[RMDB]
RNA sequence: GGGAACGACUCGAGUAGAGUCGAAAAGUUGAUGUCGAUAUCUGAGGUAUGAUUGUAUAUGACACAACAGACAACACAGUGGGACCGCUUCGCCGACAGUACGUUCCGGACGCUGGAUCGGCUUGAUUGGGACGCGACCGCUGGGGUCUAUGUCCCAACUAGCCGAUUACUUCGGUAAUCGGCUAGUAAAAGAAACAACAACAACAAC
Reactivity to 2A3 in 0.01 (KOAc 150mM, MgCl2 10mM, bicine 150mM(pH8.5), 24C), signal-to-noise 4, nucleotides 027 to 156: g030u030u020g080a300u020g080u020c030g070a030u030a060u090c100u070g100a080g120g160u210a170u200g040a150u120u080g060u090a050u050a040u180g030a020c030a010c000a030a020c020a000g040a020c010a140a030c170a020c000a110g010u020g000g030g030a070c070c010g000c030u070u060c060g070c080c000g010a010c000a000g020u180a090c020g020u070u050c030c030g080g040a100c130g010c110u090g010g050a100u040c030g020g000c000u030u120g090a180u020u050g050g000g020a010c040g020c000g030a040c000c000g010c060u040g000g010g000g020u000c010u030a050u080g040u020c000c000c000a010
Reactivity to DMS in 0.01 (KOAc 150mM, MgCl2 10mM, bicine 150mM(pH8.5), 24C), signal-to-noise 3, nucleotides 027 to 156: g040u000u010g010a080u010g020u010c020g010a080u010a040u000c060u000g010a180g050g020u010a100u020g010a140u000u000g000u010a130u000a070u000g010a040c030a110c030a030a050c050a080g000a080c020a020a080c040a030c030a060g010u000g000g020g010a130c070c040g020c020u010u000c060g010c050c030g030a050c030a090g010u000a070c030g000u000u000c090c130g040g010a050c080g000c020u010g010g010a090u000c020g020g000c060u010u010g010a180u000u000g010g030g000a040c000g020c090g020a200c020c030g020c050u000g010g010g000g000u000c040u000a100u000g000u000c010c010c000a050
This 207-nucleotide RNA was probed chemically with 2A3 and DMS. For 2A3, 2,405 sequencing reads were counted. For DMS, 5,890 sequencing reads were counted. Source: RMDB library OK3TST, as collected in RNAgym. 2A3 adducts were read by reverse transcription with SuperScript II with manganese. The RNA was probed in 150 mM KOAc, 10 mM MgCl2 and 150 mM bicine (pH 8.5) at 24 C.